[RMDB]
RNA sequence: GGGAACGACUCGAGUAGAGUCGAAAAUGGUACUUCGGUACCAAAUUUAUCCUAAGUCGGGAGACUUGAAGAGGCUUGGAUUUAUGGUCGGAAACGACCAUUGUCAGCCUUGGAGGAGUCAUCGAUCGAUAUGGACAACUAGAGAGUUCGCUCUCAACUACCUAUGCGUCUUCGGACGCAUAGGUAGAAAAGAAACAACAACAACAAC
Reactivity to 2A3 in 0.01 (KOAc 150mM, MgCl2 10mM, bicine 150mM(pH8.5), 24C), signal-to-noise 2, nucleotides 027 to 156: u060g000g000u000a000c010u040u090c250g100g000u010a000c010c040a000a000a000u070u080u020a050u030c030c000u090a120a060g020u010c010g000g000g000a170g000a070c020u000u060g010a020a030g000a020g000g000c090u150u240g180g000a080u250u300u120a010u050g000g000u000c010g090g030a080a090a010c010g000a020c000c000a000u000u000g000u000c030a000g020c050c010u000u000g030g020a120g050g100a000g060u010c090a210u060c030g120a110u100c000g000a010u020a100u190g040g010a020c050a090a110c230u230a050g000a000g000a000g130u130u240c130g030c110u000c000u060c000a000a020